[RMDB]
RNA sequence: GGGAACGACUCGAGUAGAGUCGAAAAAUGCUGUGGCAGUCGUGACCUAUUCAACGGGCGCUGGCCUGAUAUUGUAGGGGACAAUGGACGUCAGUGCUUCAGCAGCUGGCUUGCGCUACGGCGUCGAUCUUCGGACGGGGUUCGCCUCGUUUGAAGGAAAAGAAACAACAACAACAAC
Reactivity to DMS in 0.01 (KOAc 150mM, MgCl2 10mM, bicine 150mM(pH8.5), 24C), signal-to-noise 9, nucleotides 027 to 126: a050u020g000c010u000g010u010g000g010c020a110g010u010c030g010u010g010a120c020c010u000a040u010u030c170a070a070c070g000g000g010c010g020c190u040g010g010c000c010u000g000a090u040a040u010u010g010u000a040g000g000g000g010a140c060a090a070u020g000g000a100c140g010u000c010a030g020u010g000c020u020u020c160a100g010c030a100g010c040u010g000g000c020u010u020g010c110g000c000u000a040c040g010g000c010g010u000c070g010a090
Reactivity to 2A3 in 0.01 (KOAc 150mM, MgCl2 10mM, bicine 150mM(pH8.5), 24C), signal-to-noise 9, nucleotides 027 to 126: a000u080g000c010u020g000u030g040g000c010a030g020u060c020g070u060g130a130c010c010u030a090u050u140c070a070a040c040g010g010g000c050g030c120u090g120g020c000c010u030g020a030u030a030u100u050g020u030a040g000g030g010g010a020c040a040a070u080g080g020a010c030g010u010c010a030g000u010g000c000u140u110c040a050g010c010a020g030c040u070g040g010c010u050u150g040c040g000c020u020a020c030g020g000c000g010u020c020g030a080

Source information
An RNA of 177 nucleotides, treated with DMS and 2A3 and read out base by base. For DMS, 184,405 sequencing reads were counted. The RNA was probed in 150 mM KOAc, 10 mM MgCl2 and 150 mM bicine (pH 8.5) at 24 C.